[RMDB]
RNA sequence: GGGAACGACUCGAGUAGAGUCGAAAACUACAUAAAUUCGUUUAUGUAGCAUCGGGGACGCGCAGACUCCCCGUCAGACGGCUCUAGCCUUCCAAGGUCUGCACUCAACAGCUUUCGAGCUGUUGAAAGAACACUUCAGGUUCGCCUGAAGUGUUCUAAAAGAAACAACAACAACAAC
Reactivity to DMS in 0.01 (KOAc 150mM, MgCl2 10mM, bicine 150mM(pH8.5), 24C), signal-to-noise 2, nucleotides 027 to 126: c000u000a000c000a000u000a000a000a020u000u010c160g030u000u000u000a000u000g000u000a000g000c080a100u010c020g000g000g000g010a040c250g010c150g000c040a000g000a030c010u000c000c000c000c000g040u000c180a030g010a090c040g000g010c010u020c170u010a140g020c010c000u000u020c020c300a070a110g030g010u000c000u000g010c010a210c190u010c000a000a020c020a010g000c000u000u010u040c140g000a000g010c000u000g000u000u020g010a010a070